The data come from the RNA Mapping Database (RMDB), libraries RFM100 and RFMREP. Structure probing data (2A3 and DMS) for a 177-nucleotide construct. DMS adducts were read by reverse transcription with MarathonRT. Conditions: 150 mM KOAc, 10 mM MgCl2 and 150 mM bicine (pH 8.5), 24 C. Reactivities are given for positions 27 through 126.
[RMDB]
RNA sequence: GGGAACGACUCGAGUAGAGUCGAAAACCUAACCAUAAACUUUACUAUCCAAGAGUUGGAUUAGUUAUUUUAUACUCUUCCAGUACUUUUUGAGAAAUCAUAAGUCUUUGAGUUCUGGGGGGAGUAUCAAACUGUUUAUUUUCGAAUAAACAGUUUGAAAAGAAACAACAACAACAAC
Reactivity to 2A3 in 0.01 (KOAc 150mM, MgCl2 10mM, bicine 150mM(pH8.5), 24C), signal-to-noise 9, nucleotides 027 to 126: c010c000u030a050a050c070c020a130u170a150a100a050c020u090u160u150a030c010u020a010u000c000c000a090a020g140a270g300u140u040g000g010a020u040u030a010g000u030u040a060u040u130u020u040a050u010a010c000u000c000u030u000c000c000a000g020u000a010c010u010u100u090u120u130g030a030g030a030a080a060u160c080a100u100a300a070g060u010c000u020u020u050g010a010g000u020u000c010u010g020g000g010g020g040g010a000g000u000a030u020
Reactivity to DMS in 0.01 (KOAc 150mM, MgCl2 10mM, bicine 150mM(pH8.5), 24C), signal-to-noise 3, nucleotides 027 to 126: c020c000u000a040a110c220c120a110u040a080a060a040c070u010u010u030a040c030u000a020u000c010c020a050a160g020a180g010u010u010g000g000a060u010u010a060g000u000u010a040u030u010u020u020a050u000a030c020u000c020u010u010c000c000a040g010u000a010c000u010u020u040u010u020g010a010g000a050a100a080u030c200a100u030a130a180g000u000c010u000u000u020g000a010g000u000u000c010u010g020g020g000g010g010g000a010g030u000a030u030